[RMDB]
RNA sequence: GGGAACGACUCGAGUAGAGUCGAAAAGAAAAACUAUGGAUGUGGAGAAAAACAGAAGGAAACAGCAGGCUGAUUUCCUCCUAAACCUCGUGAAGCUGGAAGCUGCACGAGCCCAGCUGGUUACAUUAGGAAAUGCCGUCUAUGCUGCCAGUUCAUAGAUUAGCUGAUAGUUCGCUAUCAGCUAAUCAAAAGAAACAACAACAACAAC
Reactivity to DMS in 0.01 (KOAc 150mM, MgCl2 10mM, bicine 150mM(pH8.5), 24C), signal-to-noise 2, nucleotides 027 to 156: g000a100a110a100a110a080c070u000a100u000g000g040a050u010g010u000g030g000a170g000a090a040a070a100a150c120a100g000a070a040g000g050a040a040a050c050a060g050c090a060g020g050c010u000g020a170u000u000u000c010c000u000c030c020u020a050a080a070c080c010u000c030g030u020g000a020a010g020c010u010g040g000a150a190g080c010u000g000c020a060c000g020a040g000c020c050c050a080g010c000u000g020g020u000u000a000c070a090u000u000a060g020g010a040a030a100u000g040c030c030g000u000c050u000a120u010g020c030u000g010c020c060a110g000u000u000c010a080u000a260
Reactivity to 2A3 in 0.01 (KOAc 150mM, MgCl2 10mM, bicine 150mM(pH8.5), 24C), signal-to-noise 3, nucleotides 027 to 156: g020a010a070a030a010a010c070u050a020u050g010g000a020u040g050u090g070g040a060g050a030a120a020a050a000c050a040g120a120a090g060g000a040a110a070c010a020g030c010a030g020g010c020u020g010a080u000u000u040c000c010u040c000c010u100a130a090a020c000c020u060c050g110u090g150a040a010g000c000u050g040g090a220a080g030c020u050g000c110a070c150g010a000g010c000c000c000a010g000c010u010g000g040u090u030a000c030a090u080u070a010g000g050a040a070a040u120g110c080c010g020u000c010u040a090u080g000c000u020g000c030c000a010g000u040u030c040a030u080a080
The record gives the reactivity of an RNA of 207 nucleotides to DMS and 2A3. For 2A3 the reverse transcriptase was SuperScript II with manganese. It was measured as part of the RMDB library OK3TST. Conditions: 150 mM KOAc, 10 mM MgCl2 and 150 mM bicine (pH 8.5), 24 C. For DMS the reverse transcriptase was MarathonRT.